The data come from the RNA Mapping Database (RMDB), library TTRDEL. Structure probing data (DMS and 2A3) for a 177-nucleotide construct. The RNA was probed in 150 mM KOAc, 10 mM MgCl2 and 150 mM bicine (pH 8.5) at 24 C.
[RMDB]
RNA sequence: GGGAACGACUCGAGUAGAGUCGAAAAGAUAUGGAAGCGUGCCAAGCGCCACUCACCAUCGGAAACGAUGGUGUUGGAACUACGCUUGGGCGCUUCCUAAGUCAAAAGCGAUGCUUCGGCAUCGCAAGCUUGAUAAUGUCUUCGGACAUUAUCAAGCAAAAGAAACAACAACAACAAC
Reactivity to DMS in 0.01 (KOAc 150mM, MgCl2 10mM, bicine 150mM(pH8.5), 24C), signal-to-noise 2, nucleotides 027 to 126: g000a050u000a300u000g010g000a000a000g000c000g020u010g010c000c010a010a010g010c000g010c010c210a040c130u000c010a000c010c000a010u000c000g000g020a100a080a150c000g000a010u000g000g030u000g010u010u010g010g010a110a080c100u020a230c020g020c000u000u000g000g000g000c000g010c000u000u000c000c020u000a000a060g010u000c050a050a070a090a140g000c010g020a020u000g000c000u010u010c190g000g000c000a000u000c000g000c000a010a030
Reactivity to 2A3 in 0.01 (KOAc 150mM, MgCl2 10mM, bicine 150mM(pH8.5), 24C), signal-to-noise 2, nucleotides 027 to 126: g010a010u040a040u150g010g010a000a000g000c000g030u130g300c010c010a000a000g000c010g000c030c020a030c030u060c000a010c020c000a010u000c020g000g050a110a040a020c000g000a000u000g000g010u010g010u010u010g000g000a040a040c110u170a050c200g000c000u000u010g000g000g000c000g000c000u000u010c000c000u000a000a010g000u000c030a000a040a090a120g000c000g000a000u000g000c030u090u110c300g130g000c010a000u000c000g020c000a000a000